[RMDB]
RNA sequence: GGGAACGACUCGAGUAGAGUCGAAAACCUACUCAAUACGUCCUCGUCGUACAGAACGGUAACAUGUUUUCCGAACAUCCGCGAUUGGGUAUACGAGUAUACACCUUACCCAACCCUCGCCAACGGGAGUGCAUCCACGAGUUCGCUCGUGGAUGAAAGUUUUUUCUAGAUUCGUCUAGAAAAAACUAAAAGAAACAACAACAACAAC
Reactivity to 2A3 in 0.01 (KOAc 150mM, MgCl2 10mM, bicine 150mM(pH8.5), 24C), signal-to-noise 4, nucleotides 027 to 156: c010c000u030a050c030u040c050a050a070u060a120c020g040u030c010c020u030c020g050u020c030g020u060a070c070a150g080a160a050c030g060g000u090a080a040c060a170u140g060u070u090u040u020c030c020g030a050a020c040a130u050c000c060g020c030g070a030u050u050g000g000g060u030a040u040a050c060g020a030g100u030a040u080a100c110a080c040c030u100u080a050c020c010c010a040a030c040c030c010u050c020g050c050c020a050a060c030g020g010g020a050g040u110g030c010a000u000c000c000a000c000g000a000g010u060u060c160g040c090u000c010g000u000g000g010a000u000g000a000a000
Reactivity to DMS in 0.01 (KOAc 150mM, MgCl2 10mM, bicine 150mM(pH8.5), 24C), signal-to-noise 2, nucleotides 027 to 156: c040c020u000a070c040u000c040a080a150u010a020c040g020u020c010c010u000c020g020u000c080g010u030a190c050a060g000a110a170c010g010g020u000a060a110c130a140u000g000u000u010u000u000c030c010g010a080a100c040a100u000c040c020g010c040g050a130u000u000g000g000g040u000a020u010a060c050g000a140g000u000a110u000a140c090a090c050c030u000u000a020c010c000c000a050a060c010c010c050u010c090g020c070c070a080a110c040g060g000g010a080g020u010g000c000a030u000c010c030a020c040g010a030g020u000u000c290g020c000u000c000g060u010g010g020a000u010g010a000a050
An RNA of 207 nucleotides, treated with 2A3 and DMS and read out base by base. For DMS the reverse transcriptase was MarathonRT. The DMS profile rests on 4,308 reads. For 2A3, 3,243 sequencing reads were counted. Values are in units of 0.01, from 0 to 300, in steps of 10. The data come from the RNA Mapping Database (RMDB), library M2RFPK.